Chemical mapping of a 177-nucleotide RNA with 2A3 and DMS.
For 2A3 the reverse transcriptase was SuperScript II with manganese.
Source: RMDB library OK2TRN, as collected in RNAgym.
The RNA was probed in 150 mM KOAc, 10 mM MgCl2 and 150 mM bicine (pH 8.5) at 24 C.
[RMDB]
RNA sequence: GGGAACGACUCGAGUAGAGUCGAAAAUAGGUUAUCCAUCACUUAUAGAAAGAACUCAUGAGUUCUUUGAGAAGAGCUUAAUUUAUUACAACGGACGUCCCGAUCUCAUGACGAUUAGAGACGGUACAAGAAGAAUUCAAUUCGUUGAAUUCUUCUUAAAAGAAACAACAACAACAAC
Reactivity to 2A3 in 0.01 (KOAc 150mM, MgCl2 10mM, bicine 150mM(pH8.5), 24C), signal-to-noise 3, nucleotides 027 to 126: u030a000g010g020u020u040a030u010c040c030a050u060c040a040c030u120u110a090u030a300g260a040a080a000g010a020a010c010u030c100a130u210g060a000g040u000u010c010u020u020u080g090a110g030a120a020g020a010g000c010u000u050a090a060u140u070u110a100u110u110a080c040a130a020c060g100g110a020c040g020u030c020c010c000g070a240u030c030u020c000a080u150g090a080c140g060a050u090u210a070g000a010g000a050c020g000g040u040a040c020
Reactivity to DMS in 0.01 (KOAc 150mM, MgCl2 10mM, bicine 150mM(pH8.5), 24C), signal-to-noise 5, nucleotides 027 to 126: u000a000g000g000u000u000a010u000c030c030a160u000c070a120c020u000u000a110u010a170g010a060a020a020g000a020a020c010u000c130a180u000g010a050g020u000u000c000u000u000u010g010a100g010a090a070g010a050g000c030u010u000a010a020u010u000u010a000u010u000a090c130a060a100c110g000g010a070c040g000u000c020c010c000g000a050u000c020u000c120a140u010g000a110c190g010a050u000u000a110g020a040g000a030c010g010g020u010a060c150